[RMDB]
Chemical mapping of a 177-nucleotide RNA with 2A3 and DMS.
Reactivities are given for positions 27 through 126.
The 2A3 profile rests on 1,395 reads.
The data come from the RNA Mapping Database (RMDB), library M2PK50.
The DMS profile rests on 3,144 reads.
Conditions: 150 mM KOAc, 10 mM MgCl2 and 150 mM bicine (pH 8.5), 24 C.
RNA sequence: GGGAACGACUCGAGUAGAGUCGAAAAACUGCGGUAUUCGUACCGCAGUACAUAAAAAGGAAAAAAUACCAGUAGCCCGAAACGCAAGCGAGCACUACUGGCGCAAGAACCACUUCGGUGGUUCUAAUAAUUGAAGAGUGUUCGCACUCUUCAAUUAAAAAGAAACAACAACAACAAC
Reactivity to 2A3 in 0.01 (KOAc 150mM, MgCl2 10mM, bicine 150mM(pH8.5), 24C), signal-to-noise 2, nucleotides 027 to 126: a000c020u020g010c000g000g000u000a030u020u070c160g020u030a030c020c000g010c000a010g000u000a000c010a010u300a020a110a020a010a040g140g000a120a160a030a000a000a010u180a020c000c010a010g000u010a020g010c050c010c000g090a170a180a010c100g000c100a090a030g120c030g070a030g040c000a000c070u000a010c000u020g000g000c020g040c030a020a020g000a000a000c000c000a010c020u060u090c160g050g010u000g000g000u010u000c000u030a000a000
Reactivity to DMS in 0.01 (KOAc 150mM, MgCl2 10mM, bicine 150mM(pH8.5), 24C), signal-to-noise 4, nucleotides 027 to 126: a000c010u000g020c000g000g020u000a020u000u020c170g020u000a000c010c000g000c000a000g000u000a010c100a070u020a020a040a040a080a110g020g030a020a000a050a090a090a100u010a090c020c010a020g000u000a010g020c120c120c010g000a080a050a060c120g000c190a060a080g010c040g000a100g030c140a150c050u000a000c010u000g010g010c160g020c160a080a060g000a020a010c000c000a010c000u010u000c190g030g010u000g010g010u000u000c000u000a030a040